[RMDB]
RNA sequence: GGGAACGACUCGAGUAGAGUCGAAAAACUUUGCCUCAUCAGCUCAAAUGAUGAAAGUUGGUAGUCGAAUGAGAGAUAGUGACGUUGAAGUGGAAUUCGACUAUGAUGGCAGUUACGUGGAAAAGUCCUUAUAUGAUAGGUUCGCCUAUCAUAUAAGAAAAGAAACAACAACAACAAC
Reactivity to DMS in 0.01 (KOAc 150mM, MgCl2 10mM, bicine 150mM(pH8.5), 24C), signal-to-noise 9, nucleotides 027 to 126: a060c050u000u000u010g020c010c010u000c010a030u000c010a060g010c150u010c260a090a130a110u000g010a030u000g000a050a100a110g010u000u000g010g020u000a020g010u000c010g010a020a020u000g000a200g010a120g000a110u000a070g010u000g020a070c150g000u000u000g010a100a130g010u000g010g010a170a050u000u000c010g010a020c010u000a020u000g010a070u010g010g010c010a050g010u000u000a070c150g010u010g010g000a060a070a080a110g010u000c070
Reactivity to 2A3 in 0.01 (KOAc 150mM, MgCl2 10mM, bicine 150mM(pH8.5), 24C), signal-to-noise 8, nucleotides 027 to 126: a000c030u140u110u120g010c000c010u000c010a030u010c010a020g020c060u060c240a160a150a100u090g040a020u030g020a070a040a030g130u150u160g070g010u020a000g000u000c000g020a020a010u080g010a080g020a010g040a140u060a150g130u100g100a060c100g070u070u160g130a120a050g060u090g080g090a060a040u010u000c000g000a000c000u000a010u050g090a040u040g010g000c000a010g020u060u080a070c120g010u130g090g020a100a090a020a010g060u050c010